An RNA of 207 nucleotides, treated with DMS and 2A3 and read out base by base. It was measured as part of the RMDB library OK3TST. For DMS, 1,435 sequencing reads were counted.
RNA sequence: GGGAACGACUCGAGUAGAGUCGAAAAGAAUAACCUCCUGCUACAGAAAAUAUAACUCAAGAUUCCUAAAUUUCUGAAGGGAGCUGAUCACAGAGAUACAGGAAAGACAGUAUUGGAUGCCUGAUUGCAGUUCAACUCCAAACUCAGUUGGACCAGAUCAUAAUGGCGAUUUCGAUCGCCAUUAUGAAAAAGAAACAACAACAACAAC
Reactivity to DMS in 0.01 (KOAc 150mM, MgCl2 10mM, bicine 150mM(pH8.5), 24C), signal-to-noise 1, nucleotides 027 to 156: g030a110a220u020a060a170c050c010u000c000c000u010g050c030u000a300c040a060g000a100a020a140a110u010a060u000a070a060c050u000c000a060a140g000a210u000u020c010c000u010a070a150a230u000u000u000c040u020g010a210a240g000g000g020a030g080c070u000g010a160u000c040a160c080a160g010a200g010a070u000a050c030a220g010g030a090a070a100g000a030c090a050g030u040a100u000u000g010g050a080u000g030c040c030u000g010a110u010u000g000c040a070g020u000u000c000a000a030c000u020c020c010a000a130a060c110u000c000a040g050u010u000g000g010a060c010c040a110g030a150
Reactivity to 2A3 in 0.01 (KOAc 150mM, MgCl2 10mM, bicine 150mM(pH8.5), 24C), signal-to-noise 2, nucleotides 027 to 156: g050a060a090u120a070a070c010c010u000c010c010u060g020c010u030a020c010a030g070a060a070a090a020u170a090u060a130a030c050u060c130a100a100g000a300u040u110c030c030u060a120a220a220u030u090u040c020u050g060a080a020g000g000g020a020g000c060u040g040a110u140c060a010c010a170g030a000g000a050u060a080c020a020g030g050a030a040a000g080a040c030a000g060u110a100u120u080g060g030a050u100g030c010c010u080g010a070u050u130g000c010a020g010u020u010c010a020a010c010u010c030c050a060a020a080c010u040c080a000g000u020u030g000g060a030c020c030a040g000a080